An RNA of 177 nucleotides, treated with 2A3 and read out base by base.
It was measured as part of the RMDB library OK1LIB.
2A3 adducts were read by reverse transcription with SuperScript II with manganese.
RNA sequence: GGGAACGACUCGAGUAGAGUCGAAAACGCACCCCCAUGAUAUUCAGCUCAUUCUGCGACCAGAUAACAGUGUCCCGUGCCUCUAAAAUAUUCCUUGUUGCCGGCUGAACAGCAAUACGGAGGUGGACCAGACCCGGAAUUUCGAUUCCGGGUCUGGAAAAGAAACAACAACAACAAC
Reactivity to 2A3 in 0.01 (KOAc 150mM, MgCl2 10mM, bicine 150mM(pH8.5), 24C), signal-to-noise 1, nucleotides 027 to 126: c000g080c000a000c000c000c000c000c040a030u080g080a060u240a000u040u130c000a000g000c030u000c000a130u120u020c000u030g000c000g060a160c050c040a100g140a180u100a050a070c010a000g060u000g020u080c070c000c000g090u040g110c000c000u010c000u170a130a130a000a000u170a120u120u060c090c010u060u030g040u020u000g020c000c010g010g000c020u030g040a000a000c000a030g000c000a000a010u080a140c030g000g060a010g110g000u010g010g000a000